[RMDB]
RNA sequence: GGGAACGACUCGAGUAGAGUCGAAAAAGCCAUUUCAAGCUCUCAACCAUCUUUCCUGAUAAGAAAACCCACUUGUUAGAAUAGGGUCUUACACCAAUCGCUUAUAGCUAAGGCUGAAUUUAAGUCACCAACGUUAUGCAUUCGUGCAUAACGUUGGAAAAGAAACAACAACAACAAC
Reactivity to DMS in 0.01 (KOAc 150mM, MgCl2 10mM, bicine 150mM(pH8.5), 24C), signal-to-noise 1, nucleotides 027 to 126: a050g000c000c000a040u010u000u000c050a040a060g020c030u000c020u000c100a100a120c040c040a040u000c050u010u000u000c000c020u010g010a050u010a080a070g000a060a050a080a080c030c010c040a150c090u000u010g030u000u020a050g020a030a030u010a080g010g000g010u000c070u000u010a080c030a090c110c070a100a070u010c080g010c030u000u020a090u000a060g010c050u000a010a050g010g000c020u000g010a090a090u020u000u010a050a070g020u000c070a140
Reactivity to 2A3 in 0.01 (KOAc 150mM, MgCl2 10mM, bicine 150mM(pH8.5), 24C), signal-to-noise 2, nucleotides 027 to 126: a000g120c050c020a040u070u080u120c150a110a010g000c000u000c000u010c010a060a040c020c020a060u090c040u110u030u000c020c000u070g090a080u040a160a020g140a070a140a050a070c000c000c000a030c040u040u050g130u120u100a060g070a210a160u110a140g050g000g030u010c010u000u090a030c070a010c010c050a060a040u120c040g000c120u090u120a100u050a120g000c030u000a010a160g040g000c000u060g050a230a270u110u080u070a100a020g050u030c030a010